[RMDB]
An RNA of 170 nucleotides, treated with DMS and 2A3 and read out base by base. For 2A3 the reverse transcriptase was SuperScript II with manganese. The reactions ran in a buffer of 150 mM KOAc, 10 mM MgCl2 and 150 mM bicine (pH 8.5), at 24 C. The DMS profile rests on 2,670 reads.
RNA sequence: GGGAACGACUCGAGUAGAGUCGAAAAGGAUGUUUCUCUCCUUAGUAAGUGCUAUAAGGCUAUGAAUGCAUAUCCUCUUGUAGUCACUCCUCUUGUUUCAGCAGGCAUAUUUGGUGUAAAACCAGCUACAGCGCAGCCUUCGGGCUGCGCAAAAGAAACAACAACAACAAC
Reactivity to DMS in 0.01 (KOAc 150mM, MgCl2 10mM, bicine 150mM(pH8.5), 24C), signal-to-noise 2, nucleotides 027 to 129: g070g000a060u080g040u010u050u010c130u060c050u000c000c000u010u010a170g050u000a150a080g000u010g020c000u090a000u030a040a100g000g000c080u000a060u030g000a170a050u120g030c040a020u020a080u060c000c070u030c160u000u020g010u050a040g030u080c010a090c060u040c000c000u000c130u000u000g090u000u000u100c060a090g020c090a130g000g130c010a000u010a150u040u020u000g080g000u000g000u060a030a040a180a000c190c030a170g010c060u100a060c170a040
Reactivity to 2A3 in 0.01 (KOAc 150mM, MgCl2 10mM, bicine 150mM(pH8.5), 24C), signal-to-noise 2, nucleotides 027 to 129: g030g000a000u010g100u130u100u000c030u030c020u010c030c000u030u000a000g020u020a210a000g000u000g000c000u000a000u030a100a010g030g000c000u000a080u040g200a240a000u200g180c010a020u060a000u100c050c000u010c070u000u070g000u020a000g130u180c000a000c000u070c000c000u070c030u000u000g050u110u000u000c020a000g000c000a000g020g000c070a000u070a100u080u080u080g020g000u030g020u020a000a020a030a020c000c000a040g000c000u000a000c070a050